[RMDB]
An RNA of 207 nucleotides, treated with 2A3 and read out base by base. Values cover nucleotides 27 to 156. The RNA was probed in 150 mM KOAc, 10 mM MgCl2 and 150 mM bicine (pH 8.5) at 24 C. The 2A3 profile rests on 839 reads.

RNA sequence: GGGAACGACUCGAGUAGAGUCGAAAAAAUCACCUAUUACGAUAGGUGACAUUUGAACCAGCGAACAAUUCAGUUGCGAGAUUCGAGGUUUCAGUCUGAAUCAUAGUAGCCAUUACGAUGGCUACAACUCACUCCCGACUGUUCGCAGUCGGGAGAACUUAUCCGAGUCGUUCGCGACUCGGAUAAGAAAAGAAACAACAACAACAAC
Reactivity to 2A3 in 0.01 (KOAc 150mM, MgCl2 10mM, bicine 150mM(pH8.5), 24C), signal-to-noise 2, nucleotides 027 to 156: a000a000u050c010a010c020c000u020a020u010u060a040c220g020a020u020a010g000g000u000g010a000c000a050u100u090u160g050a020a000c000c000a010g160c000g000a000a000c010a050a130u000u010c000a010g010u000u000g000c000g000a000g000a000u000u000c010g000a010g020g060u070u170u300c040a010g130u130c020u020g020a000a000u030c070a060u150a090g010u000a000g000c000c000a000u030u080a070c180g140a020u050g010g010c000u000a000c000a000a000c020u070c060a060c010u010c000c000c000g000a000c000u000g060u050u100c300g010c140a000g000u000c010g000g060g000a010g000a000a000